[RMDB]
RNA sequence: GGGAACGACUCGAGUAGAGUCGAAAAAGCGUGGUCAAUGCGCUGUCGGCGUACUACCAGGAUGCUCUGGACCCCAUGGACAACGGUCAAGUCGAGCUGUCGACCAUUCGGCUGCUGGCCAAGCUGCCGCAUCCGCCUUGUUCGCAAGGCGGAUGCGAAAAGAAACAACAACAACAAC
Reactivity to DMS in 0.01 (KOAc 150mM, MgCl2 10mM, bicine 150mM(pH8.5), 24C), signal-to-noise 3, nucleotides 027 to 126: a020g010c030g040u000g010g000u010c060a040a050u000g030c020g010c010u000g000u020c220g000g030c050g010u000a030c100u010a080c020c010a060g000g010a130u000g000c030u000c060u020g040g000a190c030c000c030c090a210u000g010g010a040c020a060a070c030g000g010u000c040a070a100g000u010c020g020a060g020c150u030g010u000c040g060a050c040c130a120u010u010c120g030g020c010u000g020c060u000g010g000c030c060a030a090g020c030u000g010c160
Reactivity to 2A3 in 0.01 (KOAc 150mM, MgCl2 10mM, bicine 150mM(pH8.5), 24C), signal-to-noise 2, nucleotides 027 to 126: a000g050c030g050u040g000g060u030c040a050a010u090g020c030g010c040u080g300u110c080g040g000c020g050u020a020c020u030a020c070c000a000g050g040a120u170g040c010u020c030u130g120g060a140c000c000c000c010a040u060g020g020a040c010a090a010c110g000g000u030c040a060a020g020u040c020g050a060g010c100u070g130u180c010g000a060c000c030a090u110u060c030g010g000c000u020g000c010u040g000g050c060c000a010a010g040c070u080g000c020

The record gives the reactivity of an RNA of 177 nucleotides to DMS and 2A3. In probing experiments dimethyl sulfate is read out at A N1 and C N3, which are open when not base-paired. DMS adducts were read by reverse transcription with MarathonRT. The RNA was probed in 150 mM KOAc, 10 mM MgCl2 and 150 mM bicine (pH 8.5) at 24 C.